Record summary: This 207-nucleotide RNA was probed chemically with 2A3. Source: RMDB library M2RFPK, as collected in RNAgym.

[RMDB]
RNA sequence: GGGAACGACUCGAGUAGAGUCGAAAAGCAACUUAGGAUUUUAGGCUCCCCGUGCGUGUCUCGAACUAUGCCGGGCCAAACCCACGGGGGCUGGCGGUCCCCGUGCGGUCAAAAUCAAACCGCUGGAAAAACAGUUCUAGCUUCGGCUAGAACUGAAGCGAAUAUACGAGUUCGCUCGUAUAUUCGCAAAAGAAACAACAACAACAAC
Reactivity to 2A3 in 0.01 (KOAc 150mM, MgCl2 10mM, bicine 150mM(pH8.5), 24C), signal-to-noise 1, nucleotides 027 to 156: g020c000a000a070c070u100u200a150g110g000a230u220u090u150u280a100g020g000c010u070c000c080c030c040g040u110g030c010g000u020g010u000c020u030c060g130a100a060c050u040a030u160g020c020c000g000g000g000c030c050a070a010a000c000c010c000a000c000g000g000g000g000g000c000u010g000g000c000g000g000u000c020c000c000c000g000u000g010c080g000g020u040c010a050a130a060a110u080c020a110a170a130c000c030g000c030u030g060g010a090a200a050a020a000c010a000g000u000u000c000u000a000g000c000u010u050c300g030g000c000u000a020g000a000a000c000u010g000a010a000
Description: As a SHAPE reagent, 2A3 marks flexible, mostly unpaired nucleotides at the ribose 2'-OH. The 2A3 profile rests on 678 reads. Reactivities are given for positions 27 through 156. 2A3 adducts were read by reverse transcription with SuperScript II with manganese.